The data come from the RNA Mapping Database (RMDB), library OK1LIB.
This 177-nucleotide RNA was probed chemically with DMS and 2A3.
DMS adducts were read by reverse transcription with MarathonRT.
Reactivities are given for positions 27 through 126.
[RMDB]
RNA sequence: GGGAACGACUCGAGUAGAGUCGAAAAAGAUGAUUGAUGUUGCGAAGCGCUUUAAUAUACCUCAGGCAGUUGAGACACCUAGCGAGCUGUUUAAACUUGUUGAUGCGGUGGUCAUUUGUACACCCAACCUCUGCAUCGUUUUCGAACGAUGCAGAGGAAAAGAAACAACAACAACAAC
Reactivity to DMS in 0.01 (KOAc 150mM, MgCl2 10mM, bicine 150mM(pH8.5), 24C), signal-to-noise 2, nucleotides 027 to 126: a040g010a040u020g000a140u030u010g020a040u030g060u000u010g020c050g050a100a170g000c170g040c030u010u000u030a040a040u040a080u000a060c080c030u010c050a040g010g010c010a060g030u010u000g000a180g000a000c040a070c050c030u000a020g000c070g030a060g040c080u000g000u030u020u000a010a130a080c180u010u000g040u000u000g000a080u050g010c100g030g000u000g020g000u060c000a080u000u000u010g000u010a070c250a060c000c080c010a070a120
Reactivity to 2A3 in 0.01 (KOAc 150mM, MgCl2 10mM, bicine 150mM(pH8.5), 24C), signal-to-noise 1, nucleotides 027 to 126: a080g030a000u100g070a180u080u080g070a030u070g040u050u000g000c050g070a190a000g170c030g000c000u000u000u010a180a070u170a080u030a170c000c000u030c000a000g000g020c000a000g050u070u210g000a090g010a020c000a000c030c030u050a050g050c020g050a000g110c130u000g140u020u000u170a050a130a170c010u130u000g070u020u280g000a270u070g040c010g050g050u120g050g040u000c000a010u000u000u190g060u130a000c000a050c070c050c000a130a130